[RMDB]
RNA sequence: GGGAACGACUCGAGUAGAGUCGAAAACAUGGUGCUGUUUUAUGCGUUGGUCACCAAGUCGUGGAUCUGGUGGCUCGUCGUAGUGUUCAUUUUUCGCGUGGUUGAGCCCAUGGCAACGCCCCAGUGCCUGCACGAUAUUUUUCGAAAUAUCGUGCAGAAAAGAAACAACAACAACAAC
Reactivity to 2A3 in 0.01 (KOAc 150mM, MgCl2 10mM, bicine 150mM(pH8.5), 24C), signal-to-noise 5, nucleotides 027 to 126: c010a030u040g030g020u120g030c010u030g130u230u110u090u100a090u100g010c000g020u010u100g020g000u010c010a010c030c000a040a020g080u050c140g210u180g170g040a050u030c030u020g030g020u030g010g000c010u020c040g100u050c030g030u030a090g040u020g070u130u090c050a110u060u050u030u090u160c040g000c040g030u050g000g080u070u100g040a000g000c000c010c010a030u050g030g000c030a030a030c030g040c010c000c010c000a020g040u030g080c010
Reactivity to DMS in 0.01 (KOAc 150mM, MgCl2 10mM, bicine 150mM(pH8.5), 24C), signal-to-noise 5, nucleotides 027 to 126: c040a070u000g010g020u010g020c030u000g000u010u000u000u010a090u010g010c030g020u010u010g010g020u000c010a020c010c010a020a040g010u000c030g040u010g020g010a030u000c060u000g010g010u000g010g000c010u000c170g010u000c040g030u000a060g010u000g000u000u020c070a130u000u000u010u000u010c060g020c040g030u000g020g010u000u000g010a110g010c050c010c020a040u000g000g000c050a060a050c090g010c030c040c010c030a110g010u010g000c130
Conditions: 150 mM KOAc, 10 mM MgCl2 and 150 mM bicine (pH 8.5), 24 C. The record gives the reactivity of an RNA of 177 nucleotides to 2A3 and DMS. The 2A3 profile rests on 6,451 reads. The data come from the RNA Mapping Database (RMDB), library OK2TST.